[RMDB]
RNA sequence: GGGAACGACUCGAGUAGAGUCGAAAAUCCAAUUUCGAUUGGAGCCUUCUUAGACCUGUGCAAUGCCGUUUAUGAGCACCGCUUCAGGGUGGGAACACAGCAGAGCACUUGUUUAUGGUGUGUGCCGCAGUUAUCUGGCGUUUCCCUUUCGAGGGAAGCAUGGUUAACUUUUCGAAGUUAACCAUGCAAAAGAAACAACAACAACAAC
Reactivity to DMS in 0.01 (KOAc 150mM, MgCl2 10mM, bicine 150mM(pH8.5), 24C), signal-to-noise 2, nucleotides 027 to 156: u000c020c060a090a150u000u010u020c120g020a070u000u010g020g000a060g010c040c050u000u010c080u000u000a080g020a020c020c000u000g000u010g060c010a040a190u000g020c010c000g010u000u000u000a110u030g010a300g010c040a080c050c040g030c110u000u010c140a130g050g000g020u000g010g000g010a170a110c100a080c030a070g030c020a050g020a300g020c010a030c010u010u000g010u000u000u000a050u010g000g000u010g010u010g000u010g020c030c030g000c060a140g000u000u010a050u000c070u010g000g040c060g000u000u000u000c000c000c000u000u000u000c220g010a080g030g020g030a040a100
Reactivity to 2A3 in 0.01 (KOAc 150mM, MgCl2 10mM, bicine 150mM(pH8.5), 24C), signal-to-noise 3, nucleotides 027 to 156: u030c020c000a020a000u080u110u110c130g140a030u000u030g020g010a060g020c000c020u050u090c020u040u130a040g010a060c010c010u000g010u010g040c010a030a060u010g020c000c010g080u080u140u140a170u160g050a040g080c030a030c010c050g110c070u190u200c140a110g160g000g000u020g000g020g040a070a010c030a000c010a080g000c010a000g020a000g030c000a000c000u020u030g020u010u050u020a080u060g090g040u060g030u030g040u070g080c040c010g000c050a050g030u090u090a090u160c040u080g010g030c030g030u000u020u030c000c000c000u030u060u040c210g070a030g000g010g010a010a010